[RMDB]
RNA sequence: GGGAACGACUCGAGUAGAGUCGAAAAUUAACCAUAAUCCAAUAUAGAAUAUUAAAACACUGAUAUACAUCAUAUUAAUUUCAAACAAGUCAUUUAGUUUAUUGUUAUUACUAAAAACAAUUGCAGCCCCUUCUAGUCCUUUCGAGGACUAGAAGGGAAAAGAAACAACAACAACAAC
Reactivity to 2A3 in 0.01 (KOAc 150mM, MgCl2 10mM, bicine 150mM(pH8.5), 24C), signal-to-noise 1, nucleotides 027 to 126: u040u000a000a000c000c000a010u110a130a020u230c040c000a120a000u040a060u000a300g170a040a000u040a150u300u020a060a020a020a020c040a000c000u040g000a000u060a000u040a300c020a000u090c040a020u030a020u130u120a090a050u220u210u120c080a020a040a000c020a170a090g300u060c000a000u030u170u170a000g000u000u000u000a060u040u040g020u020u000a040u060u060a180c000u120a280a090a060a000a000c000a000a000u070u070g180c140a040g100c000
Conditions: 150 mM KOAc, 10 mM MgCl2 and 150 mM bicine (pH 8.5), 24 C. Structure probing data (2A3) for a 177-nucleotide construct.